[RMDB]
RNA sequence: GGGAACGACUCGAGUAGAGUCGAAAAUUGUCUGCACCCAAACCGGAUUCCAUUUGUAUUUACACACAUUUCGGGCAGGUAGAACAACUCUGGAAUGAGCUCGCGGACAUCCUGCGAGUUCGUCAGCUAUGAGGAUUUACUUCGGUAAAUCCUCAUAAAAAGAAACAACAACAACAAC
Reactivity to DMS in 0.01 (KOAc 150mM, MgCl2 10mM, bicine 150mM(pH8.5), 24C), signal-to-noise 3, nucleotides 027 to 126: u010u000g020u000c020u010g020c080a120c030c030c040a030a110a270c080c030g020g020a070u000u000c040c050a060u010u000u010g020u000a070u020u000u020a130c170a100c190a040c030a050u010u000u000c120g020g020g000c050a040g010g000u010a040g010a060a020c050a060a080c160u010c070u000g020g020a110a060u000g000a020g000c030u000c000g010c020g000g000a180c290a110u000c160c010u000g000c010g000a020g000u000u000c000g030u010c030a050g030c300
Reactivity to 2A3 in 0.01 (KOAc 150mM, MgCl2 10mM, bicine 150mM(pH8.5), 24C), signal-to-noise 2, nucleotides 027 to 126: u040u040g040u020c000u020g010c050a110c000c030c000a010a030a060c060c000g040g000a090u070u030c040c010a050u030u070u140g050u010a100u030u150u180a030c040a000c000a020c020a060u030u110u120c030g000g010g000c030a030g020g030u030a040g060a100a050c070a020a020c020u050c020u150g050g040a130a080u080g000a010g000c000u000c000g000c000g050g000a050c010a160u160c020c000u020g000c000g020a010g000u000u010c000g000u010c010a010g030c000
An RNA of 177 nucleotides, treated with DMS and 2A3 and read out base by base. DMS adducts were read by reverse transcription with MarathonRT. For 2A3, 1,858 sequencing reads were counted.